RNA sequence: GGGAACGACUCGAGUAGAGUCGAAAAGGUCAGGGAUACGUGGAGAUGGUCCUACAGGGCUCUGUCCCCUUCUUCGUCCCUUCCCCUUCCCCUGUGGGUUCUGGGGACAGAGCCUUGAGCCGGGGGCCGUGGCUGAUAGGUUCGCCUAUCAGCCACGAAAAGAAACAACAACAACAAC
Reactivity to DMS in 0.01 (KOAc 150mM, MgCl2 10mM, bicine 150mM(pH8.5), 24C), signal-to-noise 1, nucleotides 027 to 126: g010g000u000c060a080g020g010g020a090u000a050c120g000u010g020g020a160g000a110u010g020g000u010c020c010u010a190c040a040g000g000g000c000u010c000u000g020u010c000c010c000c000u000u010c120u010u000c120g020u000c010c000c030u010u000c030c000c000c070u010u000c050c000c000c160u000g000u000g010g000g010u010u010c090u010g010g000g010g010a030c020a010g000a020g000c000c010u000u000g000a170g010c080c110g010g010g000g010g040c120
Notes
An RNA of 177 nucleotides, treated with DMS and read out base by base. The DMS profile rests on 2,001 reads.